[RMDB]
RNA sequence: GGGAACGACUCGAGUAGAGUCGAAAAGUCUGUUGCGUGUGCGUUUUUAUUUGACGAAUUCUGACCGAUAUUGGUAGCACAUGAAUCCCAUCGUAAUUAACAGAUUGCAGCGUAAGCUGGGGUACACCACUACAAGCCUCUUCGGAGGCUUGUAGUGAAAAGAAACAACAACAACAAC
Reactivity to DMS in 0.01 (KOAc 150mM, MgCl2 10mM, bicine 150mM(pH8.5), 24C), signal-to-noise 1, nucleotides 027 to 126: g000u010c010u010g000u020u000g030c030g000u020g000u000g010c010g000u000u000u000u000u000a050u010u010u000g100a150c170g010a130a070u000u030c080u040g060a240c030c100g000a070u000a100u000u000g030g000u000a140g000c010a030c050a010u000g000a070a100u010c000c000c010a140u010c140g010u020a130a060u000u000a010a020c020a000g010a010u000u000g020c000a020g020c000g000u010a110a100g010c000u010g000g000g010g000u010a090c200a160c230